[RMDB]
RNA sequence: GGGAACGACUCGAGUAGAGUCGAAAAGAUAUGGAGAACCCAGCGAGGAGGAUGGUAGGCUUCCCUAACUCGGAAACGAGUUAGCAGCCUACCAUCCUCUACCCACCGCUGAGGUUCUCCUAAGUCACACCUAAUGCAUCUUCGGAUGCAUUAGGUGAAAAGAAACAACAACAACAAC
Reactivity to DMS in 0.01 (KOAc 150mM, MgCl2 10mM, bicine 150mM(pH8.5), 24C), signal-to-noise 1, nucleotides 027 to 126: g010a060u000a300u000g010g010a030g000a020a010c000c000c010a010g000c010g020a060g000g020a010g010g000a050u000g000g020u000a000g000g010c000u000u010c120c280c000u000a020a000c000u030c000g090g000a140a150a270c000g000a010g000u020u000a010g080c180a010g010c010c000u020a000c000c000a000u040c010c010u000c000u000a030c060c000c160a300c180c000g000c000u000g030a120g030g000u000u010c000u000c000c000u010a010a050g000u000c030a300
Notes:
Structure probing data (DMS) for a 177-nucleotide construct. The reactions ran in a buffer of 150 mM KOAc, 10 mM MgCl2 and 150 mM bicine (pH 8.5), at 24 C. Source: RMDB library TTRINS, as collected in RNAgym. The DMS profile rests on 924 reads.